[RMDB]
RNA sequence: GGGAACGACUCGAGUAGAGUCGAAAAGACUACGGGUUCGCCCGUAGUCACUUACCGAGAAUGCGACUCGGUAUAUAACGCAAACCCUUGGAAACAAGGGAAUCACCAGUUCCUUCGGGAACUGGAACGCCUUAAUUACGUUCGCGUAAUUAAGGCGAAAAGAAACAACAACAACAAC
Reactivity to 2A3 in 0.01 (KOAc 150mM, MgCl2 10mM, bicine 150mM(pH8.5), 24C), signal-to-noise 1, nucleotides 027 to 126: g000a000c000u000a030c020g010g030g060u020u110c250g080c020c000c000g010u000a000g000u000c000a000c000u010u080a050c000c000g000a010g000a130a140u170g040c040g150a120c050u010c000g020g000u000a000u000a000u000a010a000c010g000c060a040a080a300c000c000c000u000u000g020g020a000a000a060c000a000a000g000g000g040a010a040u060c050a020c010c000a000g020u000u010c000c000u000u040c140g090g000g000a000a020c030u000g000g030a000a050
Reactivity to DMS in 0.01 (KOAc 150mM, MgCl2 10mM, bicine 150mM(pH8.5), 24C), signal-to-noise 1, nucleotides 027 to 126: g010a000c010u000a000c020g000g000g020u000u030c140g040c000c000c000g000u000a000g040u000c020a020c110u010u000a120c040c000g010a010g000a100a210u020g010c110g030a060c000u000c010g030g000u010a020u000a110u010a000a100c190g000c160a000a140a170c000c000c000u000u030g000g000a160a060a110c000a040a020g000g010g030a030a010u000c260a240c000c000a000g030u000u000c000c000u000u020c180g000g000g000a000a020c000u000g000g000a030a100
Structure probing data (2A3 and DMS) for a 177-nucleotide construct.
The reactions ran in a buffer of 150 mM KOAc, 10 mM MgCl2 and 150 mM bicine (pH 8.5), at 24 C.
For DMS, 818 sequencing reads were counted.
It was measured as part of the RMDB library M2PK50.
2A3 adducts were read by reverse transcription with SuperScript II with manganese.
The 2A3 profile rests on 2,127 reads.
For DMS the reverse transcriptase was MarathonRT.